Overview:
Structure probing data (DMS) for a 177-nucleotide construct. The RNA was probed in 150 mM KOAc, 10 mM MgCl2 and 150 mM bicine (pH 8.5) at 24 C. For DMS, 771 sequencing reads were counted.
RNA sequence: GGGAACGACUCGAGUAGAGUCGAAAAUAGAGGAAACUACGAGUUGACGUAAAGAAGGAAGACUGAGCACUUUGGGAGGGGAAGGAUAGAACUCUAACUCAUUGUUGGGUGCUCCCACCGGUGAUAGAUCGAUUAUCCGGUUCGCCGGAUAAUCGAUAAAAGAAACAACAACAACAAC
Reactivity to DMS in 0.01 (KOAc 150mM, MgCl2 10mM, bicine 150mM(pH8.5), 24C), signal-to-noise 1, nucleotides 027 to 126: u020a100g010a050g010g010a180a100a070c020u000a060c170g000a050g000u000u000g020a110c080g010u000a090a090a080g000a050a080g010g010a020a070g010a060c070u000g010a110g020c060a120c060u000u000u020g000g000g010a080g000g020g000g020a030a040g010g000a050u000a080g020a040a080c090u000c040u010a020a080c040u000c090a130u000u010g020u000u000g000g020g020u010g050c090u010c010c020c010a080c140c020g000g020u000g000a120u010a110g000
The data come from the RNA Mapping Database (RMDB), library OK2TST.